[RMDB]
RNA sequence: GGGAACGACUCGAGUAGAGUCGAAAAGCAUUGCUGCAUUUAAAAGGUCCGUAGUCAGUGUUGACAGGGAUGCUAGAAGACACUUUCUUCAUGGAGUGUAUUGGCAUUCUAGGUUAGCAUGUAGGAGACAUAAUUACCACUUCGGUGGUAAUUAUGUAAAAGAAACAACAACAACAAC
Reactivity to 2A3 in 0.01 (KOAc 150mM, MgCl2 10mM, bicine 150mM(pH8.5), 24C), signal-to-noise 9, nucleotides 027 to 126: g020c030a070u100u230g020c040u040g010c030a110u080u110u270a120a180a030a030g090g030u030c020c020g030u030a030g080u070c070a030g020u010g010u030u020g000a010c020a020g000g030g010a000u010g000c010u030a050g070a210a030g090a070c010a000c000u120u170u200c040u240u160c090a180u280g020g010a010g000u000g000u020a060u050u110g000g000c000a000u010u000c010u020a060g060g080u010u010a000g000c010a010u040g060u110a070g020g110a060g010
Reactivity to DMS in 0.01 (KOAc 150mM, MgCl2 10mM, bicine 150mM(pH8.5), 24C), signal-to-noise 9, nucleotides 027 to 126: g010c050a070u010u010g010c080u000g010c030a090u010u010u020a060a050a110a100g010g010u000c020c020g020u010a090g010u010c050a210g010u000g010u000u010g010a020c010a200g000g000g000a000u000g000c000u000a040g010a090a070g000a020c010a010c010u000u000u020c050u020u030c290a130u030g010g000a010g010u000g000u000a040u010u000g000g000c000a000u000u000c000u000a080g010g000u000u000a010g010c010a020u010g010u010a120g000g010a120g000
Overview
Chemical mapping of a 177-nucleotide RNA with 2A3 and DMS. 2A3 is a SHAPE reagent: it acylates the 2'-hydroxyl of flexible nucleotides of all four kinds. Values cover nucleotides 27 to 126.